An RNA of 177 nucleotides, treated with 2A3 and read out base by base.
[RMDB]
RNA sequence: GGGAACGACUCGAGUAGAGUCGAAAAUAUAAAAAUCGAGCCCCUGUCCCUGAAUAAAGGCAUUUUUGAUGUGCUGAUCCUUUUCCUGAAGCCCGAAAAAGCUAUGCGCAUUGUUCAGGCCAGUGCCGUCGGCUUCAGAAUUCGUUCUGAAGCCGACAAAAGAAACAACAACAACAAC
Reactivity to 2A3 in 0.01 (KOAc 150mM, MgCl2 10mM, bicine 150mM(pH8.5), 24C), signal-to-noise 2, nucleotides 027 to 126: u300a030u070a010a060a020a010a000u110c040g010a070g000c000c000c010c000u010g080u080c010c020c000u030g040a050a010u180a070a120a050g060g040c020a030u000u040u000u050u140g120a120u140g020u010g020c000u030g060a060u050c000c010u000u200u000u020c000c000u050g110a140a080g010c000c000c000g150a070a080a000a000a010g060c050u060a010u130g040c050g040c020a050u020u120g040u040u030c000a000g010g060c060c020a020g000u010g080c030c070